[RMDB]
RNA sequence: GGGAACGACUCGAGUAGAGUCGAAAAAGCAACGAGUGUGUGUGGGACGUUUUAUCCCAAGCUCUGAGUUGAGCACGCGCUCACACACACCGCGAGCGAGCAUCAGCAGAGCGCAAACGCUGGUAAAGAUUUAUAGAGGGUUCGCCCUCUAUAAAUCAAAAGAAACAACAACAACAAC
Reactivity to DMS in 0.01 (KOAc 150mM, MgCl2 10mM, bicine 150mM(pH8.5), 24C), signal-to-noise 7, nucleotides 027 to 126: a090g010c040a170a060c020g000a260g010u000g010u000g020u010g010u000g010g000g000a080c020g010u000u010u010u000a140u010c040c040c030a100a110g010c010u000c000u010g000a170g020u010u000g000a020g000c020a110c100g000c070g000c000u000c000a000c000a000c010a010c000a010c010c010g000c030g000a220g010c020g000a130g000c070a040u000c030a020g000c030a090g010a120g010c080g010c120a070a080a110c140g000c020u000g000g000u000a070a100a150
Reactivity to 2A3 in 0.01 (KOAc 150mM, MgCl2 10mM, bicine 150mM(pH8.5), 24C), signal-to-noise 5, nucleotides 027 to 126: a010g050c030a060a040c020g020a120g060u010g000u000g000u000g010u010g000g010g010a040c010g000u000u040u160u220a160u080c000c020c010a020a010g000c000u000c010u090g300a300g200u180u100g080a000g020c000a010c030g030c010g010c010u000c000a000c000a000c000a000c010a000c000c000g030c010g000a010g000c010g010a030g000c030a030u050c010a010g000c020a020g030a030g150c080g000c090a130a040a010c070g010c010u020g000g020u050a120a130a000